An RNA of 177 nucleotides, treated with 2A3 and DMS and read out base by base. Values cover nucleotides 27 to 126. The reactions ran in a buffer of 150 mM KOAc, 10 mM MgCl2 and 150 mM bicine (pH 8.5), at 24 C. For DMS the reverse transcriptase was MarathonRT. It was measured as part of the RMDB library OK1LIB.
[RMDB]
RNA sequence: GGGAACGACUCGAGUAGAGUCGAAAAAUGCUAUAAAAUAUUGCAAGUGAGAUGAAAAAUUUAUGUACACUUUGCAUGAACUCUCUCUCCCCAGUUUUAUGAGGUUUAUCUUUAGUGACUAGGAGGAACCAAACACACACUUCGGUGUGUGUUUGGUAAAAGAAACAACAACAACAAC
Reactivity to 2A3 in 0.01 (KOAc 150mM, MgCl2 10mM, bicine 150mM(pH8.5), 24C), signal-to-noise 2, nucleotides 027 to 126: a000u190g020c040u030a000u120a300a060a060a000u170a280u140u110g000c000a010a060g000u040g040a140g020a230u150g300a060a010a120a150a090u160u200u120a050u120g120u130a000c000a060c000u060u070u060g000c000a000u040g000a030a040c000u020c000u000c000u020c000u020c050c000c000c000a080g020u000u000u000u170a070u130g000a000g000g000u020u160u110a100u000c000u000u000u230a110g000u000g060a090c000u000a020g010g040a000g000g000a000
Reactivity to DMS in 0.01 (KOAc 150mM, MgCl2 10mM, bicine 150mM(pH8.5), 24C), signal-to-noise 1, nucleotides 027 to 126: a050u020g000c040u000a090u020a030a070a200a180u180a040u050u040g000c000a010a020g050u050g000a250g000a010u010g000a050a090a050a160a120u050u000u000a030u050g000u040a070c020a030c100u010u050u020g030c000a040u000g050a020a080c030u020c100u070c060u010c030u000c000c000c000c000a170g000u030u010u010u000a080u010g020a010g000g000u000u040u030a110u020c020u000u000u000a030g000u000g000a070c060u040a170g000g000a040g000g000a150